[RMDB]
RNA sequence: GGGAACGACUCGAGUAGAGUCGAAAAGAAUCCGGGGGCGAACCGAUCAUCGCGUACAGCACUGACGACUCGGUCGGACCCGAGUUGUCGACGUAGUCGACCCGGUAAGACUCGAAUGGUCGGUGACAGUACUGCUGCACUUCGGUGCAGCAGUACUAAAAGAAACAACAACAACAAC
Reactivity to 2A3 in 0.01 (KOAc 150mM, MgCl2 10mM, bicine 150mM(pH8.5), 24C), signal-to-noise 1, nucleotides 027 to 126: g190a000a000u060c030c030g000g000g000g180g020c030g000a000a000c000c000g000a140u020c040a080u010c000g100c080g030u110a200c050a000g000c050a000c000u140g000a000c000g030a030c020u000c120g000g050u110c080g090g090a060c000c000c000g000a060g000u000u000g000u000c000g030a000c030g130u060a050g000u000c010g000a190c000c000c020g020g000u050a000a040g000a000c000u080c170g050a080a100u250g030g000u010c000g000g050u000g060a040c030